The record gives the reactivity of an RNA of 207 nucleotides to 2A3.
The 2A3 profile rests on 511 reads.
Conditions: 150 mM KOAc, 10 mM MgCl2 and 150 mM bicine (pH 8.5), 24 C.
Reactivities are given for positions 27 through 156.

RNA sequence: GGGAACGACUCGAGUAGAGUCGAAAAAGCUUCGACGCGAAACGCUGCGCGGCAAAUGACACCAACGACUGACCCAUCUGCGCCGGCCGCCGGCGCAUACAUGAGGAACCACACGAUGAAGCCCUACGUUUUCGGCGUCGGCGUACUGCUGAUGCUCCUCUUACACGUUCUUCGGAACGUGUAAGAGAAAAGAAACAACAACAACAAC
Reactivity to 2A3 in 0.01 (KOAc 150mM, MgCl2 10mM, bicine 150mM(pH8.5), 24C), signal-to-noise 1, nucleotides 027 to 156: a000g070c030u050u050c020g020a020c010g000c110g030a050a120a010c000g020c070u080g080c070g010c060g100g000c050a050a080a080u170g020a060c060a030c040c040a030a040c050g100a080c080u130g160a200c000c030c000a000u090c040u080g010c010g000c000c010g080g090c200c080g050c040c000g000g000c000g000c000a020u010a000c050a020u110g020a180g150g000a080a010c040c030a040c000a010c030g070a070u150g080a090a000g000c020c020c010u080a070c100g050u000u000u080u060c010g050g020c000g020u000c000g000g000c020g010u110a170c120u150g010c000u040g030a010u140g030c000u070c060